The data come from the RNA Mapping Database (RMDB), library M2RFPK. The record gives the reactivity of an RNA of 207 nucleotides to 2A3 and DMS. 2A3 adducts were read by reverse transcription with SuperScript II with manganese. For 2A3, 2,146 sequencing reads were counted. The RNA was probed in 150 mM KOAc, 10 mM MgCl2 and 150 mM bicine (pH 8.5) at 24 C.
RNA sequence: GGGAACGACUCGAGUAGAGUCGAAAAGAACUUUGGCCGGCUCGGAAUAGAAUCAGCGGGUGCAAACUGCCCACUGGCAGAAAGGAUUAUAGCAAAUGCGUACCCUAUUGCAAUACAGCCCGGCCAACAUAGACUACUCUAUUCGUAGAGUAGUCAAACGACAUAUGUUGUUCGCAACAUAUGUCGUAAAAGAAACAACAACAACAAC
Reactivity to 2A3 in 0.01 (KOAc 150mM, MgCl2 10mM, bicine 150mM(pH8.5), 24C), signal-to-noise 3, nucleotides 027 to 156: g020a050a060c040u040u000u010g000g000c000c000g010g000c030u030c070g030g060a060a050u140a100g060a100a070u160c020a050g050c000g030g000g000u010g000c030a080a130a090c040u050g000c010c030c000a160c170u170g020g000c030a030g080a080a110a020g100g010a080u200u140a090u250a140g070c050a050a070a080u130g010c020g020u060a050c000c010c000u030a100u030u130g100c030a020a070u050a140c020a020g010c040c030c010g000g000c000c000a000a000c000a010u070a000g000a000c000u000a000c000u000c000u000a040u080u060c130g040u070a000g000a000g000u010a000g000u000c000a000a010
Reactivity to DMS in 0.01 (KOAc 150mM, MgCl2 10mM, bicine 150mM(pH8.5), 24C), signal-to-noise 2, nucleotides 027 to 156: g000a150a060c110u000u020u000g010g020c010c000g070g000c030u000c150g000g040a060a090u000a040g020a130a130u010c010a060g020c040g000g000g030u010g000c030a070a070a240c150u000g000c000c020c100a080c060u000g010g000c050a090g000a080a080a060g000g000a120u000u020a060u000a120g020c050a050a090a090u010g010c040g030u000a050c040c010c010u000a160u000u000g020c050a120a070u000a130c050a040g010c070c010c010g000g000c010c010a000a010c120a110u000a200g000a080c020u000a000c000u000c000u000a060u010u000c270g020u000a020g010a050g010u000a010g000u010c010a000a030